[RMDB]
The record gives the reactivity of an RNA of 177 nucleotides to DMS.
RNA sequence: GGGAACGACUCGAGUAGAGUCGAAAAUUAAAGGCCAUUCCCAGGCCAGGUAGCAGAGCGGAUAUAUAUAAUCUCUCGCCAUAUAUAGCUACCAAAGGCGAGAGGAUAUAUAUAUCCGCUCUAAAAACUAAAGUAAAGUGUUCGCACUUUACUUUAGAAAAGAAACAACAACAACAAC
Reactivity to DMS in 0.01 (KOAc 150mM, MgCl2 10mM, bicine 150mM(pH8.5), 24C), signal-to-noise 2, nucleotides 027 to 126: u010u010a050a070a110g000g090c000c000a100u010u000c000c000c000a250g020g000c010c090a110g010g000u000a100g010c150a030g000a010g020c020g000g000a000u010a000u010a010u000a000u000a010a020u000c000u000c000u000c000g010c000c000a040u000a070u000a140u000a140g000c070u000a040c070c070a070a150a130g000g010c000g000a000g010a000g000g000a020u000a000u000a000u000a000u000a000u000c000c000g010c000u000c000u000a000a020a060a090a060
Source information
Values cover nucleotides 27 to 126.